[RMDB]
RNA sequence: GGGAACGACUCGAGUAGAGUCGAAAAGAUAUGGAUCGUCGUCCAACGCGUUGAAAGCAGAUCGGAAACGAUCUGCUGGAGCGUGGGACGAGCGAUCCUAAGUCAAACAGGUUGUUCGCAACCUGAAGCAUUUUAAGUGGUUCGCCACUUAAAAUGCAAAAGAAACAACAACAACAAC
Reactivity to 2A3 in 0.01 (KOAc 150mM, MgCl2 10mM, bicine 150mM(pH8.5), 24C), signal-to-noise 2, nucleotides 027 to 126: g020a050u090a010u130g000g010a000u000c000g060u030c000g010u000c020c000a050a050c010g020c020g300u300u070g020a020a030a010g010c010a010g010a020u010c000g030g050a110a010a020c020g020a000u000c000u030g000c010u000g000g010a010g020c000g010u010g020g020g000a000c000g030a000g020c000g000a000u020c000c000u000a030a010g010u030c060a070a050a130c010a000g000g000u030u020g030u070u120c260g050c160a020a010c020c000u020g010a110a020
Reactivity to DMS in 0.01 (KOAc 150mM, MgCl2 10mM, bicine 150mM(pH8.5), 24C), signal-to-noise 3, nucleotides 027 to 126: g000a030u000a300u030g010g000a000u000c000g030u000c000g020u000c000c010a060a020c000g020c000g010u000u020g020a170a170a040g000c000a010g010a000u010c000g000g010a180a100a280c000g000a000u000c000u010g000c010u000g000g000a050g000c000g030u000g000g010g000a020c000g010a020g010c000g010a000u000c000c010u000a020a150g010u010c020a140a140a300c020a000g030g000u000u000g020u000u000c250g020c000a020a040c000c000u020g000a100a130